Annotation:
An RNA of 177 nucleotides, treated with DMS and read out base by base. For DMS, 641 sequencing reads were counted. The data come from the RNA Mapping Database (RMDB), library RFMREP. Reactivities are given for positions 27 through 126. The RNA was probed in 150 mM KOAc, 10 mM MgCl2 and 150 mM bicine (pH 8.5) at 24 C.
RNA sequence: GGGAACGACUCGAGUAGAGUCGAAAAGUGGUCACAACGGUUCUUGUUAAGUUCAGAGGUGACUGAAUAAAUAGGUCCUCUCCUUUGAGCUGCGGGACAGACAGCCCUGUUGGCUGUUUUCAUUUUACUUGUUAUUGGUCUUCGGACCAAUAACAAGAAAAGAAACAACAACAACAAC
Reactivity to DMS in 0.01 (KOAc 150mM, MgCl2 10mM, bicine 150mM(pH8.5), 24C), signal-to-noise 1, nucleotides 027 to 126: g010u020g000g000u010c060a060c060a050a130c110g010g010u000u000c050u000u000g020u010u010a100a070g010u000u000c010a000g010a010g020g010u000g030a020c040u010g000a130a160u010a030a080a060u010a300g000g000u010c040c300u020c110u020c010c020u000u000u000g020a000g010c020u030g010c150g000g000g000a010c080a130g000a040c030a010g010c000c000c190u010g000u000u000g000g000c040u000g060u010u010u010u010c080a060u000u070u000u000a070